[RMDB]
RNA sequence: GGGAACGACUCGAGUAGAGUCGAAAAGAAAGAAAGACAUGUGCCACGCUGGAUGUGCUCGUUAGUCAUAAUAUCCUCCACAAAGCAAGGACUAUGACUAGAGACACAUUCAGCUUGGCGCCGAAAAGACCUAGCUUAAAUUCGUUUAAGCUAGGUCAAAAGAAACAACAACAACAAC
Reactivity to 2A3 in 0.01 (KOAc 150mM, MgCl2 10mM, bicine 150mM(pH8.5), 24C), signal-to-noise 9, nucleotides 027 to 126: g110a020a080a010g160a040a100a010g120a030c090a130u150g000u020g010c000c000a010c010g000c000u000g010g010a000u000g000u010g010c040u000c020g130u060u040a000g000u000c000a000u010a030a040u070a060u060c010c010u050c040c020a170c110a150a190a020g120c090a050a010g000g000a000c010u000a000u000g000a000c000u010a010g010a000g040a020c000a000c000a000u000u000c000a000g000c000u000u000g000g000c000g000c000c000g030a060a050a010a020
Reactivity to DMS in 0.01 (KOAc 150mM, MgCl2 10mM, bicine 150mM(pH8.5), 24C), signal-to-noise 7, nucleotides 027 to 126: g010a070a110a110g010a080a070a080g010a110c140a070u010g020u010g000c020c000a010c070g020c000u000g010g010a000u000g010u000g010c100u000c010g010u020u020a000g010u000c000a010u000a010a060u020a300u010c000c010u000c160c080a150c290a100a100a110g010c260a160a010g000g030a040c180u000a000u000g000a000c000u010a030g000a040g000a050c000a000c000a010u000u010c000a010g000c000u000u000g000g000c000g010c000c140g000a060a070a100a090